[RMDB]
RNA sequence: GGGAACGACUCGAGUAGAGUCGAAAACGGGUGGGUUCACAUCCCCAACCCGCGGGCCGGCUGUUCUUCUUUUCCUUUGCUCGUCUUCCCCGGUCAGCCUCCCGAGUUCCUCUUCUUCUUCCCUGCUAAGUGUUAUCAUGUUCGCAUGAUAACACUUAAAAGAAACAACAACAACAAC
Reactivity to DMS in 0.01 (KOAc 150mM, MgCl2 10mM, bicine 150mM(pH8.5), 24C), signal-to-noise 2, nucleotides 027 to 126: c030g000g000g040u000g010g000g010u000u000c240a070c200a140u000c140c000c010c030a090a110c020c010c010g020c090g010g000g020c040c080g020g010c070u010g000u000u040c040u000u000c050u020u000u000u000c040c030u000u000u010g010c020u000c030g000u000c040u000u000c000c010c010c050g020g020u000c020a090g000c000c000u000c010c020c000g000a130g020u010u000c010c000u010c050u000u010c020u000u010c100u000u000c010c010c000u000g000c120u010